[RMDB]
RNA sequence: GGGAACGACUCGAGUAGAGUCGAAAACAACCUUUUGAGGGUCAUUAAAGCGGCGUGAAAACGUUCGCUAGUGAUCUGAAGCCUUUUCAGGUUGCGACACUGUCAAAUUGCGGGGAAGCCCUAAAGAUUCAACUACUAAGCAGCUUGUGGAAACACAGCAUACGUACACGUUCGCGUGUACGUAUGCAAAAGAAACAACAACAACAAC
Reactivity to 2A3 in 0.01 (KOAc 150mM, MgCl2 10mM, bicine 150mM(pH8.5), 24C), signal-to-noise 1, nucleotides 027 to 156: c000a010a030c010c010u000u050u070u200g120a020g040g020g000u020c020a020u030u160a150a150a000g000c010g030g000c000g060u010g000a090a000a000a030c020g000u300u300c000g010c000u000a010g040u000g010a010u000c000u040g060a090a000g040c000c000u120u050u050u070c090a040g140g000u000u020g010c020g050a000c020a040c040u020g010u110c040a070a090a070u070u070g050c210g000g000g070g000a060a180g030c000c000c000u050a030a070a000g060a000u230u090c060a070a000c020u040a030c020u050a080a000g020c030a040g060c060u090u050g020u040g000g050a060a140a000c040a010c000a050